[RMDB]
RNA sequence: GGGAACGACUCGAGUAGAGUCGAAAAAUUGAAUGUUUCAUGAGGAUCAUGUUUACUGCUCUGUGUGUGGUACAUGAUACACAUUCAGUAAAUAUUUGUUGAAUUCAUGCAUGAAUGGAUGGAUGUCUGUCAGAUUAUGUUUCGACAUAAUCUGACAAAAAGAAACAACAACAACAAC
Reactivity to DMS in 0.01 (KOAc 150mM, MgCl2 10mM, bicine 150mM(pH8.5), 24C), signal-to-noise 4, nucleotides 027 to 126: a040u010u000g000a040a020u000g000u000u000u000c080a070u010g010a120g010g010a050u000c020a020u000g010u010u010u000a010c010u000g010c070u010c170u000g030u020g030u010g040u000g000g010u000a070c120a040u010g010a020u000a070c080a050c010a010u000u000c010a020g010u000a020a070a070u010a070u000u000u010g000u000u000g010a110a070u000u000c010a020u000g010c050a040u000g010a060a060u000g020g010a060u000g000g010a080u000g000u010c090
Reactivity to 2A3 in 0.01 (KOAc 150mM, MgCl2 10mM, bicine 150mM(pH8.5), 24C), signal-to-noise 3, nucleotides 027 to 126: a000u120u090g030a030a020u060g060u080u150u130c120a100u100g040a040g120g030a010u010c000a000u000g010u010u100u090a000c000u020g090c010u020c090u140g160u040g020u010g020u030g140g040u030a070c040a070u110g000a000u040a000c020a000c000a000u040u010c000a000g030u030a010a110a060u110a080u030u070u140g110u040u120g070a090a050u050u000c010a000u030g120c010a000u060g170a210a060u080g040g070a010u040g070g000a040u100g050u090c030
An RNA of 177 nucleotides, treated with DMS and 2A3 and read out base by base. For 2A3, 2,067 sequencing reads were counted. The RNA was probed in 150 mM KOAc, 10 mM MgCl2 and 150 mM bicine (pH 8.5) at 24 C.